[RMDB]
RNA sequence: GGGAACGACUCGAGUAGAGUCGAAAACUCGCGUCAGCCAAGCGCUCGCCAGCCCGGCAGCCUACCCGAACCUGUUUCCGUCACUGCGCAAUGUGGACUUGCCGCCUCCAAACGGACCGGAGGUUGGCGUCCUGAGUCAUUUCGAUGACUCAGGACGAAAAGAAACAACAACAACAAC
Reactivity to 2A3 in 0.01 (KOAc 150mM, MgCl2 10mM, bicine 150mM(pH8.5), 24C), signal-to-noise 2, nucleotides 027 to 126: c000u000c000g010c010g080u050c010a010g000c030c030a100a040g020c000g010c080u020c040g060c000c020a040g020c000c030c000g030g040c020a030g000c000c010u030a050c060c020c020g040a020a070c000c010u080g050u050u050u010c030c020g040u050c020a020c080u080g020c020g040c090a030a050u140g010u040g060g020a040c020u020u130g020c020c000g000c000c030u000c000c000a030a170a110c100g110g020a080c010c060g000g010a000g000g000u060u280g030g010
Reactivity to DMS in 0.01 (KOAc 150mM, MgCl2 10mM, bicine 150mM(pH8.5), 24C), signal-to-noise 1, nucleotides 027 to 126: c030u020c100g010c110g000u080c050a060g000c130c070a090a160g000c060g010c040u040c070g000c090c050a120g000c040c000c030g000g050c000a030g000c020c020u000a170c040c010c060g020a130a050c070c030u000g010u000u000u020c020c000g000u000c020a130c040u000g000c010g010c040a080a070u000g020u030g040g000a030c000u140u000g040c020c020g000c000c000u000c010c000a030a070a230c110g020g000a110c090c050g000g000a010g000g000u020u000g010g000

About this RNA:
The record gives the reactivity of an RNA of 177 nucleotides to 2A3 and DMS. For 2A3 the reverse transcriptase was SuperScript II with manganese. The RNA was probed in 150 mM KOAc, 10 mM MgCl2 and 150 mM bicine (pH 8.5) at 24 C. It was measured as part of the RMDB library OK1LIB. Reactivities are given for positions 27 through 126.